[RMDB]
RNA sequence: GGGAACGACUCGAGUAGAGUCGAAAAGAGCUUUUUUUCGAAAAAGCUCCGGCCCAAUGCCUAUGUGUACACUUCACAAGGGUUUGUGGUGGUCAAUGGCAAUACCAGCAAUCUUCGGAUUGCUGAAGCCAUCACUAUUUUUCGAAAUAGUGAUGGCAAAAGAAACAACAACAACAAC
Reactivity to 2A3 in 0.01 (KOAc 150mM, MgCl2 10mM, bicine 150mM(pH8.5), 24C), signal-to-noise 4, nucleotides 027 to 126: g010a010g000c010u040u020u020u010u010u040u120c120g060a020a010a010a010a000g020c020u000c010c010g060g000c030c000c000a020a060u080g000c010c020u100a070u190g160u020g020u090a050c040a030c040u120u150c040a010c020a070a070g300g010g020u050u080u030g030u040g010g020u010g010g040u090c030a050a060u060g010g000c000a010a030u150a130c060c010a000g000c010a000a000u000c000u050u070c180g120g000a010u010u000g000c000u010g000a010a000
Reactivity to DMS in 0.01 (KOAc 150mM, MgCl2 10mM, bicine 150mM(pH8.5), 24C), signal-to-noise 4, nucleotides 027 to 126: g000a010g010c000u000u000u000u000u000u010u020c120g010a010a020a000a000a010g010c000u000c000c030g000g010c010c000c000a160a090u010g020c010c010u000a160u010g020u010g010u000a130c040a050c030u010u020c010a010c010a040a120g010g010g020u010u000u010g040u000g000g010u000g010g000u000c030a050a180u000g000g010c010a110a120u010a100c190c000a000g010c010a000a000u000c000u000u000c150g020g010a000u010u000g000c000u000g000a040a100